Structure probing data (DMS and 2A3) for a 177-nucleotide construct. The 2A3 profile rests on 19,256 reads. Source: RMDB library OK2TST, as collected in RNAgym. High 2A3 reactivity points to a flexible backbone, as in loops and unpaired stretches. Values cover nucleotides 27 to 126. For 2A3 the reverse transcriptase was SuperScript II with manganese.
RNA sequence: GGGAACGACUCGAGUAGAGUCGAAAAGGUGAGUGCGCAGCGCGAGGCGGAAGCCAUCGGCACGCUGCAUGAUGGCCGUAAGCCCUCCAUGCGCGACAUGUUCGAGGAUGUCUAUGCCGAAACGCCACUAUUAAAAUCGGUUCGCCGAUUUUAAUAGAAAAGAAACAACAACAACAAC
Reactivity to DMS in 0.01 (KOAc 150mM, MgCl2 10mM, bicine 150mM(pH8.5), 24C), signal-to-noise 9, nucleotides 027 to 126: g010g020u000g000a170g030u000g010c010g010c010a020g010c180g040c120g020a040g010g020c010g010g010a250a200g010c000c000a020u000c010g000g000c010a200c250g020c240u000g020c000a020u010g010a030u000g000g010c000c020g000u010a300a110g010c090c010c020u000c010c020a060u000g010c010g010c010g000a020c040a030u000g010u010u000c140g000a120g000g000a060u000g000u000c040u000a110u010g000c010c010g000a060a070a100c120g010c040c040a230
Reactivity to 2A3 in 0.01 (KOAc 150mM, MgCl2 10mM, bicine 150mM(pH8.5), 24C), signal-to-noise 8, nucleotides 027 to 126: g050g010u060g050a100g050u250g020c020g000c010a070g110c030g070c130g090a020g000g000c020g020g020a060a040g010c000c000a010u010c010g010g000c040a030c150g250c140u120g000c010a030u140g000a000u010g010g000c010c000g010u040a040a070g090c020c010c000u000c010c000a020u030g000c010g000c010g010a000c000a020u090g070u130u170c120g070a090g130g030a030u030g030u040c020u070a060u170g030c010c010g020a050a030a010c070g010c020c000a030